The record gives the reactivity of an RNA of 177 nucleotides to DMS. DMS (dimethyl sulfate) methylates the pairing face of unpaired adenines and cytosines. Reactivities are given for positions 27 through 126. The data come from the RNA Mapping Database (RMDB), library OK2TST.

[RMDB]
RNA sequence: GGGAACGACUCGAGUAGAGUCGAAAAGAUCGGCGACGGCGAACACAAUAUUGGCUCGGUGAAGCUGCAUGAAAGCCUGGGCUUUACCCAUUGCGGACGCAUCGAGGGUUCGGGCUUCAAGCACGGAUACCUGGCAUGCAUUCGUGCAUGCCAGGUAAAAAGAAACAACAACAACAAC
Reactivity to DMS in 0.01 (KOAc 150mM, MgCl2 10mM, bicine 150mM(pH8.5), 24C), signal-to-noise 1, nucleotides 027 to 126: g010a060u010c050g060g010c010g030a100c050g000g000c010g000a090a070c020a060c120a080a120u000a080u010u000g030g020c020u010c030g010g060u000g000a100a120g000c170u000g020c050a070u000g000a050a080a130g010c020c060u000g010g000g000c010u010u010u010a090c090c070c100a070u020u030g040c000g000g010a130c130g010c020a040u010c090g000a070g000g000g000u000u000c000g030g010g000c020u000u040c070a050a020g010c000a080c060g000g000a200